This 177-nucleotide RNA was probed chemically with 2A3 and DMS. Conditions: 150 mM KOAc, 10 mM MgCl2 and 150 mM bicine (pH 8.5), 24 C. DMS adducts were read by reverse transcription with MarathonRT.
RNA sequence: GGGAACGACUCGAGUAGAGUCGAAAACGUCCUGAAGGAAUCAAACGGAAGGGACGGAUGGUAUCUUCGGAUGCCAUAGAUAGAUGGCUACCGCUCUUGGUGCGAGGGAUACGUCCCGCUUGCAGCACCUCAUAUUCUUUUUCGAAAGAAUAUGAGGAAAAGAAACAACAACAACAAC
Reactivity to 2A3 in 0.01 (KOAc 150mM, MgCl2 10mM, bicine 150mM(pH8.5), 24C), signal-to-noise 9, nucleotides 027 to 126: c010g010u010c010c020u060g040a060a040g070g040a060a150u220c080a140a080a050c030g020g030a050a060g050g000g010a000c010g010g020a010u040g030g010u020a010u010c010u040u060c190g090g000a020u040g000c000c000a000u000a020g080a010u070a020g130a050u080g050g000c030u060a080c020c030g020c040u030c030u070u100g050g020u040g020c020g010a070g020g020g000a020u030a080c110g060u030c000c000c000g020c030u040u090g010c030a040g020c010a030
Reactivity to DMS in 0.01 (KOAc 150mM, MgCl2 10mM, bicine 150mM(pH8.5), 24C), signal-to-noise 9, nucleotides 027 to 126: c050g010u010c000c000u010g010a300a170g000g000a090a090u040c240a080a120a160c040g000g000a240a160g010g000g000a020c010g000g000a040u000g010g000u000a010u000c000u000u030c160g020g000a060u010g000c000c000a000u000a020g000a120u020a090g010a070u010g000g000c030u000a130c040c030g010c080u010c050u010u010g000g010u000g010c010g000a090g000g000g000a070u010a060c110g010u000c000c000c010g000c180u000u020g000c070a060g010c070a160